[RMDB]
RNA sequence: GGGAACGACUCGAGUAGAGUCGAAAAUAUUUGUUUUCAUUCAUCUCAUUGGCCGUGUAGUUCAUGUCUAUGCCUCAUCCCGUUAUGCAUAGGCGCCCGAACAUGAUGGCAACGCUGGAAAUGUUUACUUUAUUAUAUACUUCGGUAUAUAAUAAAGAAAAGAAACAACAACAACAAC
Reactivity to DMS in 0.01 (KOAc 150mM, MgCl2 10mM, bicine 150mM(pH8.5), 24C), signal-to-noise 2, nucleotides 027 to 126: u020a100u010u000u000g020u010u010u000u000c300a300u010u000c060a080u000c050u000c030a130u020u010g020g030c000c010g050u010g030u010a000g000u030u000c010a040u010g010u000c000u010a030u000g010c010c240u030c190a120u000c040c030c030g000u010u000a080u020g010c000a010u000a030g000g020c000g000c220c200c090g010a030a010c000a030u010g010a010u000g000g000c020a080a050c140g010c100u010g010g000a040a030a060u000g000u010u000u000a120
This 177-nucleotide RNA was probed chemically with DMS. For DMS the reverse transcriptase was MarathonRT. It was measured as part of the RMDB library RFMREP. For DMS, 1,204 sequencing reads were counted. The RNA was probed in 150 mM KOAc, 10 mM MgCl2 and 150 mM bicine (pH 8.5) at 24 C.